[RMDB]
RNA sequence: GGGAACGACUCGAGUAGAGUCGAAAACGAUACCGCAUUGAUCGCAUGUAGACUAUUAAAGCGUCGCAUGGUCGAUGCUCGUAGUCUGUAUUAGUGUUCGACCAUGAAACUAAUGCGACGAGCGGAAGGUACUGCUGGAUUUCGAUCUAGUAGUACCAAAAGAAACAACAACAACAAC
Reactivity to 2A3 in 0.01 (KOAc 150mM, MgCl2 10mM, bicine 150mM(pH8.5), 24C), signal-to-noise 9, nucleotides 027 to 126: c030g030a050u130a130c010c000g000c170a220u020u100g090a210u090c000g010c020a010u030g050u120a030g010a010c010u020a050u170u240a180a130a030g060c040g020u010c010g000c070a110u150g070g030u140c000g000a000u010g000c000u000c020g010u010a020g090u080c120u110g080u040a080u050u030a020g010u030g280u090u040c050g050a110c080c040a070u160g010a020a000a010c050u060a080a000u020g000c000g000a000c000g000a010g010c000g010g010a030a040
Reactivity to DMS in 0.01 (KOAc 150mM, MgCl2 10mM, bicine 150mM(pH8.5), 24C), signal-to-noise 9, nucleotides 027 to 126: c070g010a150u050a090c010c010g000c000a150u020u010g000a120u000c000g010c000a090u010g020u020a040g010a020c010u010a200u010u040a090a110a050g010c080g020u000c020g000c010a170u030g010g000u030c000g010a010u000g000c000u010c110g010u000a010g000u020c060u030g010u010a040u020u010a030g010u010g000u010u000c020g000a110c170c130a080u030g000a060a060a060c090u010a050a030u000g010c000g010a010c010g000a040g000c010g000g010a070a080
Conditions: 150 mM KOAc, 10 mM MgCl2 and 150 mM bicine (pH 8.5), 24 C. An RNA of 177 nucleotides, treated with 2A3 and DMS and read out base by base. For DMS, 60,083 sequencing reads were counted. Source: RMDB library OK1LIB, as collected in RNAgym. For 2A3, 127,586 sequencing reads were counted.